[RMDB]
RNA sequence: GGGAACGACUCGAGUAGAGUCGAAAAACCUACAUUCGUGUAGGUGGAGUGGGGUCUCCUCAGUACUCGCGACAUGAGCUGAAGCCUCCACGGCUCAACAGCGAACUACGAGGAACCGGAGACGGAGGCACCCAACACGGGCAAUUUCGAUUGCCAAGCCUGCAAUUAGGUUCGCCUAAUUGCAGGCAAAAGAAACAACAACAACAAC
Reactivity to 2A3 in 0.01 (KOAc 150mM, MgCl2 10mM, bicine 150mM(pH8.5), 24C), signal-to-noise 2, nucleotides 027 to 156: a000c010c020u020a020c040a010u010u190c240g130u020g000u100a000g070g000u020g000g030a150g050u210g020g050g080g000u020c000u020c010c000u000c000a020g020u000a020c010u020c020g070c010g040a090c060a160u160g030a000g000c000u020g050a200a020g000c000c000u060c070c120a060c070g020g050c000u020c000a100a130c020a050g010c060g070a120a120c070u130a050c300g000a000g000g000a000a000c000c000g000g000a020g000a000c000g020g050a000g030g020c010a020c000c030c000a050a030c100a030c110g150g020g010c000a020a020u110u230u120c190g110a020u050u000g010c000c010a000a000